[RMDB]
RNA sequence: GGGAACGACUCGAGUAGAGUCGAAAAACAGGACGCGCUCGGCCCACGUCGAGAACUGCACGUAGUCGGGCAGCAGUUCCUUUGCAGCGCCGUCGAACUCCCGGCUGACGUAGAUGUGUCGCCGGGAGACCUCCCGUCGGUUCGCCGACGGGAGGUCAAAAGAAACAACAACAACAAC
Reactivity to 2A3 in 0.01 (KOAc 150mM, MgCl2 10mM, bicine 150mM(pH8.5), 24C), signal-to-noise 1, nucleotides 027 to 126: a000c050a020g000g070a000c010g040c010g000c010u060c040g050g040c030c060c030a060c030g040u060c040g010a090g080a220a030c110u130g050c100a010c090g060u100a030g050u080c060g050g000g020c030a050g000c000a000g040u040u060c000c000u110u070u070g080c030a040g070c000g050c050c100g000u010c040g050a050a060c030u010c000c000c000g030g000c100u080g000a000c020g020u130a160g020a300u190g180u050g000u140c000g010c020c000g030g030g020a000
Reactivity to DMS in 0.01 (KOAc 150mM, MgCl2 10mM, bicine 150mM(pH8.5), 24C), signal-to-noise 1, nucleotides 027 to 126: a070c210a080g040g010a030c040g000c010g000c010u000c030g040g030c070c010c070a190c120g010u020c030g040a120g000a080a060c120u000g040c110a090c160g040u000a120g000u000c020g050g010g010c010a090g000c030a030g050u000u020c000c030u010u060u010g010c060a130g000c080g000c110c050g030u010c070g000a120a210c050u010c000c000c000g000g000c000u030g030a000c000g000u000a090g040a140u010g020u000g010u000c000g020c000c000g000g000g000a000